[RMDB]
Description
Chemical mapping of a 177-nucleotide RNA with 2A3 and DMS.

RNA sequence: GGGAACGACUCGAGUAGAGUCGAAAACAAAUGAGCCUAACUCUGCCACAUAUAUCAUAUAGGAGCUGGCAAAGGCUUGAUGACAAAGAGAUCUCUCUCAAGCCUUUCCCACAUCAGAGGCUGGCUUUAGUUAUAACAUCUUCGGAUGUUAUAACUAAAAAGAAACAACAACAACAAC
Reactivity to 2A3 in 0.01 (KOAc 150mM, MgCl2 10mM, bicine 150mM(pH8.5), 24C), signal-to-noise 3, nucleotides 027 to 126: c010a010a070a140u200g030a030g000c010c000u020a050a030c000u010c000u020g040c080c000a060c080a040u150a020u050a060u200c070a060u120a020u050a260g050g030a090g080c150u020g010g000c000a000a020a000g000g000c000u000u000g030a060u090g030a020c090a040a200a010g090a050g040a170u040c060u000c010u000c000u000c160a010a000g000c000c000u000u000u000c010c010c010a020c010a020u040c010a010g010a010g080g000c090u020g000g000c000u020u020
Reactivity to DMS in 0.01 (KOAc 150mM, MgCl2 10mM, bicine 150mM(pH8.5), 24C), signal-to-noise 3, nucleotides 027 to 126: c020a080a130a110u000g000a060g010c010c000u000a270a200c010u000c010u000g000c080c120a110c110a100u000a020u000a130u010c180a090u010a100u010a150g010g000a120g010c180u000g000g010c200a030a030a020g000g000c000u000u000g000a050u010g000a030c140a060a110a140g000a090g020a150u000c140u000c100u000c010u000c000a000a040g000c000c000u000u000u000c300c000c020a050c110a080u000c040a000g020a060g000g010c190u000g000g010c030u000u000
Values cover nucleotides 27 to 126.
Source: RMDB library RFMREP, as collected in RNAgym.
2A3 is a SHAPE reagent: it acylates the 2'-hydroxyl of flexible nucleotides of all four kinds.
2A3 adducts were read by reverse transcription with SuperScript II with manganese.